This 177-nucleotide RNA was probed chemically with 2A3 and DMS. For DMS, 10,326 sequencing reads were counted. Source: RMDB library TTRDEL, as collected in RNAgym. The reactions ran in a buffer of 150 mM KOAc, 10 mM MgCl2 and 150 mM bicine (pH 8.5), at 24 C.
[RMDB]
RNA sequence: GGGAACGACUCGAGUAGAGUCGAAAAGAUAUGGACGUACCAGGGAGCUCGUCGGAAACGACAGAGCGAAGAACUGGCGCGUCCUAAGUCAAACUUAUUCCUUCCACUUCGGUGGAAGGAAUAAGAAGUCAAUAAUGAAGUUCGCUUCAUUAUUGACAAAAGAAACAACAACAACAAC
Reactivity to 2A3 in 0.01 (KOAc 150mM, MgCl2 10mM, bicine 150mM(pH8.5), 24C), signal-to-noise 4, nucleotides 027 to 126: g010a010u070a030u150g000g000a000c010g000u010a040c020c000a000g010g000g020a020g010c010u010c000g010u000c000g010g040a080a070a030c010g030a010c110a240g010a000g000c010g030a080a010g020a010a010c000u000g010g000c010g010c010g020u000c000c000u000a030a000g020u000c030a040a040a080c000u010u000a000u000u010c000c000u000u000c000c000a010c020u060u100c300g150g000u000g000g000a000a000g000g010a000a000u000a000a000g000a000a000
Reactivity to DMS in 0.01 (KOAc 150mM, MgCl2 10mM, bicine 150mM(pH8.5), 24C), signal-to-noise 6, nucleotides 027 to 126: g010a040u000a300u000g000g010a010c000g020u000a060c010c000a010g000g010g010a090g010c000u000c010g010u000c010g010g000a080a080a180c010g000a010c010a100g020a010g010c000g000a060a100g000a110a180c000u000g000g000c000g010c000g010u000c000c000u000a010a050g010u000c020a090a110a220c000u000u000a000u000u000c000c000u000u000c000c000a020c000u000u020c200g030g000u000g000g000a000a000g000g010a000a000u000a010a000g000a100a090